This 177-nucleotide RNA was probed chemically with 2A3 and DMS. It was measured as part of the RMDB library OK2TST. For DMS, 551 sequencing reads were counted.

RNA sequence: GGGAACGACUCGAGUAGAGUCGAAAAGACGAUUGUCUCCAAUUAUUUUCCAAACCAGAAAUACUAGGAUUAACCGAUUCGUGGUACUGCCCUACAUGCAAGGAACAUCGUCAGGCUACCAAACAAAAGGUAACGAGUAGUUCGCUACUCGUUACCUAAAAGAAACAACAACAACAAC
Reactivity to 2A3 in 0.01 (KOAc 150mM, MgCl2 10mM, bicine 150mM(pH8.5), 24C), signal-to-noise 2, nucleotides 027 to 126: g020a000c010g100a070u040u280g000u000c080u020c050c000a010a070u160u090a080u100u140u110u020c040c030a100a050a110c030c000a030g060a100a060a050u090a080c080u110a050g060g000a100u120u060a040a080c010c060g100a090u100u130c080g080u100g030g000u020a060c060u070g000c040c010c000u100a090c070a040u070g040c030a040a190g010g000a010a000c000a000u000c000g050u060c000a000g090g000c000u130a070c030c040a110a000a020c070a050a060a070
Reactivity to DMS in 0.01 (KOAc 150mM, MgCl2 10mM, bicine 150mM(pH8.5), 24C), signal-to-noise 1, nucleotides 027 to 126: g000a030c020g000a030u020u010g040u000c110u030c060c040a110a090u000u000a060u010u000u000u000c020c020a100a070a270c210c040a100g000a080a030a200u000a020c040u000a130g000g030a090u000u020a030a040c100c150g000a160u000u000c080g010u000g030g000u000a010c100u000g000c060c010c000u000a040c110a040u000g030c250a080a150g000g000a050a070c050a040u000c000g020u010c050a060g000g000c060u010a280c000c020a110a120a090c100a040a030a040